[RMDB]
RNA sequence: GGGAACGACUCGAGUAGAGUCGAAAAGUAGGGCGCCACGGCGGGAGGUGUCAGGCGGACUAUCGGGACUCGCCAUACCUGAAGACGGGGUGUAGUACAGAUCCUCGUACUCAUCGCGCGGAACCUCACUAACGAUGAGCUUCGGCUCAUCGUUAGUAAAAGAAACAACAACAACAAC
Reactivity to DMS in 0.01 (KOAc 150mM, MgCl2 10mM, bicine 150mM(pH8.5), 24C), signal-to-noise 1, nucleotides 027 to 126: g000u020a110g100g000g000c010g010c020c020a090c060g040g050c020g000g000g000a030g010g040u050g030u060c100a030g000g010c060g000g010a050c050u000a150u110c070g000g020g010a120c090u000c060g000c000c000a120u030a050c030c080u010g000a190a070g000a030c020g020g000g000g030u000g000u010a090g000u050a060c100a050g000a170u030c030c050u020c030g000u000a010c030u020c040a030u000c080g000c120g000c090g040g000a110a060c110c000u020c120
Reactivity to 2A3 in 0.01 (KOAc 150mM, MgCl2 10mM, bicine 150mM(pH8.5), 24C), signal-to-noise 2, nucleotides 027 to 126: g120u100a090g000g040g020c000g010c040c000a050c000g030g010c000g010g070g020a050g010g020u030g050u070c030a010g000g050c000g000g020a020c000u070a140u140c080g050g020g020a050c000u000c050g040c000c000a010u090a090c020c020u000g020a090a000g030a050c000g030g000g060g030u030g060u060a060g010u000a010c010a050g100a060u020c020c000u100c060g020u030a030c000u000c010a050u050c010g030c000g020c000g060g050a040a030c000c020u090c020